[RMDB]
RNA sequence: GGGAACGACUCGAGUAGAGUCGAAAAAGACACAGAAACCAAGAACGAACGGUGAAGGGAAAAGUCGUAGGCGCGUUGGCUCACUAGAGUCAACUAGGGAAGCAACCGGUCUCGGUUGGACGAUGACCACAGAACGUUAAUUCGUUAACGUUCUGUGAAAAGAAACAACAACAACAAC
Reactivity to 2A3 in 0.01 (KOAc 150mM, MgCl2 10mM, bicine 150mM(pH8.5), 24C), signal-to-noise 5, nucleotides 027 to 126: a000g050a010c030a000c000a090g110a090a060a020c020c010a030a020g050a090a040c060g000a030a010c030g030g040u080g050a040a040g060g020g000a020a100a030a040g040u040c050g030u040a040g050g040c030g000c040g070u010u010g000g000c000u000c010a080c150u160a090g000a000g030u010c010a000a000c010u020a010g000g020g070a040a020g040c010a010a000c020c020g070g150u090c140u090c100g020g030u040u030g030g010a010c020g050a060u100g050a040c020
Reactivity to DMS in 0.01 (KOAc 150mM, MgCl2 10mM, bicine 150mM(pH8.5), 24C), signal-to-noise 9, nucleotides 027 to 126: a060g000a110c070a070c110a080g000a100a090a100c040c030a090a080g010a110a100c100g000a060a070c120g000g010u000g010a090a070g010g000g000a050a050a050a080g000u000c040g020u010a070g010g010c070g020c140g020u000u010g000g000c010u010c000a170c300u020a100g000a020g020u000c020a020a020c010u010a090g000g000g000a060a080g000c040a040a060c050c040g010g010u010c140u010c020g010g010u000u000g010g010a070c060g010a060u010g000a100c130

About this RNA:
This 177-nucleotide RNA was probed chemically with 2A3 and DMS. For DMS the reverse transcriptase was MarathonRT. It was measured as part of the RMDB library OK2TST. For DMS, 14,446 sequencing reads were counted. Values cover nucleotides 27 to 126. The reactions ran in a buffer of 150 mM KOAc, 10 mM MgCl2 and 150 mM bicine (pH 8.5), at 24 C.